[RMDB]
RNA sequence: GGGAACGACUCGAGUAGAGUCGAAAAGUUUCUCUUCACGGAGGGGCUGCUUCUGUGUCUCGGUUGAUUGCUGGACAGUUCGACGACUUAAGGAGCCAUUCCCUUGUGGAUGGUUUUUAUUUCCGGUUUUUACCAGUUAUUUCGAUAACUGGUAAAAAAAAGAAACAACAACAACAAC
Reactivity to DMS in 0.01 (KOAc 150mM, MgCl2 10mM, bicine 150mM(pH8.5), 24C), signal-to-noise 5, nucleotides 027 to 126: g010u000u010u000c000u010c030u000u010c160a080c170g010g010a050g000g000g010g010c040u000g000c060u000u000c020u010g020u000g010u010c020u000c050g010g010u010u010g010a090u010u010g020c030u000g010g010a120c110a060g000u010u010c010g000a110c090g010a040c030u000u010a090a070g000g010a020g010c020c030a040u010u010c000c000c070u020u010g020u020g000g010a020u000g000g010u000u000u000u020u010a100u010u000u010c010c040g020g010u010
Reactivity to 2A3 in 0.01 (KOAc 150mM, MgCl2 10mM, bicine 150mM(pH8.5), 24C), signal-to-noise 5, nucleotides 027 to 126: g000u000u040u000c020u000c000u030u090c070a060c050g070g040a050g000g000g010g030c030u040g000c020u030u010c010u030g150u010g030u030c000u010c040g040g010u050u080g070a180u060u110g050c060u110g040g060a050c010a040g050u110u220c030g010a040c030g010a010c010u090u150a080a040g050g000a000g020c000c010a010u090u120c020c020c020u030u180g040u050g020g010a030u030g020g030u000u020u000u000u120a120u050u040u050c030c000g030g020u000
Chemical mapping of a 177-nucleotide RNA with DMS and 2A3. DMS adducts were read by reverse transcription with MarathonRT. Conditions: 150 mM KOAc, 10 mM MgCl2 and 150 mM bicine (pH 8.5), 24 C.